The data come from the RNA Mapping Database (RMDB), library ARCHII. This 207-nucleotide RNA was probed chemically with DMS and 2A3. DMS adducts were read by reverse transcription with MarathonRT. The 2A3 profile rests on 3,827 reads.
[RMDB]
RNA sequence: GGGAACGACUCGAGUAGAGUCGAAAAGGAGGCUGAGGCUGGAGGAUCGCUUGAGUCCAGGAGUUCUGGGCUGUAGUGCGCUAUGCCGAUCGGGUGUCCGCACUAAGUUCGGCAUCAAUAUGGUGACCUCCCGGGAGCGGGGGACCACCAGGUUGCCCUACACUUUAAGCUUCGGCUUAAAGUGUAGAAAAGAAACAACAACAACAAC
Reactivity to DMS in 0.01 (KOAc 150mM, MgCl2 10mM, bicine 150mM(pH8.5), 24C), signal-to-noise 2, nucleotides 027 to 156: g020g020a080g000g050c040u000g000a080g020g010c020u010g000g010a130g020g000a040u000c030g010c010u000u000g020a080g020u010c030c020a060g020g010a270g000u000u010c020u000g030g020g000c010u000g010u000a100g010u000g010c030g010c080u000a060u000g030c000c020g010a100u000c090g040g030g000u000g000u000c230c080g030c000a080c030u000a060a070g000u020u000c030g020g000c060a060u000c040a060a120u000a080u010g030g020u020g020a050c020c010u000c010c010c030g070g000g020a160g000c030g040g000g060g020g000a010c020c010a020c010c010a020g000g020u000u000g000c010c020
Reactivity to 2A3 in 0.01 (KOAc 150mM, MgCl2 10mM, bicine 150mM(pH8.5), 24C), signal-to-noise 5, nucleotides 027 to 156: g030g010a020g020g010c070u050g020a010g060g000c030u040g060g030a030g020g020a050u070c040g010c080u050u070g050a010g020u010c010c020a020g010g040a130g090u230u100c030u040g000g000g000c000u010g060u050a030g010u010g000c020g010c080u070a020u060g040c010c010g140a210u110c090g060g000g000u030g010u040c040c080g020c020a020c020u050a100a110g010u040u040c010g000g000c000a000u030c030a050a100u140a080u180g000g000u010g020a060c000c000u050c000c020c010g040g070g020a120g090c060g010g010g000g000g010a060c100c010a000c000c000a010g040g010u010u030g000c000c000